[RMDB]
RNA sequence: GGGAACGACUCGAGUAGAGUCGAAAAAAAAGAUAUGGAAUAAACAGAGUACCGAGCAACGCAGAUAGCUUUCGGAAACGAAAGCUGUAGUUGCUCGGGUACGACGAAGUUUAUUCCUAAGUCAAAACGUUAGUUUUUAGUUCGCUAAAAACUAACGAAAAGAAACAACAACAACAAC
Reactivity to 2A3 in 0.01 (KOAc 150mM, MgCl2 10mM, bicine 150mM(pH8.5), 24C), signal-to-noise 1, nucleotides 027 to 126: a000a030a050a030g050a010u090a040u180g020g000a010a010u020a010a030a000c030a020g070a010g050u000a030c000c010g000a000g010c010a020a000c030g010c050a050g100a300u120a090g020c000u040u000u020c010g030g000a100a060a020c000g020a000a000a010g000c000u000g020u030a050g010u000u010g000c020u020c020g040g000g010u000a000c010g130a030c040g060a090a020g000u000u020u000a000u010u000c000c010u010a120a010g060u010c060a000a080a000a080
Reactivity to DMS in 0.01 (KOAc 150mM, MgCl2 10mM, bicine 150mM(pH8.5), 24C), signal-to-noise 3, nucleotides 027 to 126: a090a110a110a060g000a020u010a300u010g000g010a030a000u000a030a000a010c000a070g010a300g000u000a030c000c000g020a010g010c000a010a010c000g020c230a150g010a070u000a010g010c000u010u000u000c000g000g000a060a070a120c010g000a010a010a000g010c000u000g030u000a030g000u000u010g000c000u000c010g000g010g010u000a010c060g030a090c190g000a160a120g000u010u000u000a010u000u000c000c000u010a070a090g020u000c030a090a080a110a130
Annotation
This 177-nucleotide RNA was probed chemically with 2A3 and DMS. The data come from the RNA Mapping Database (RMDB), library TTRDES. 2A3 adducts were read by reverse transcription with SuperScript II with manganese.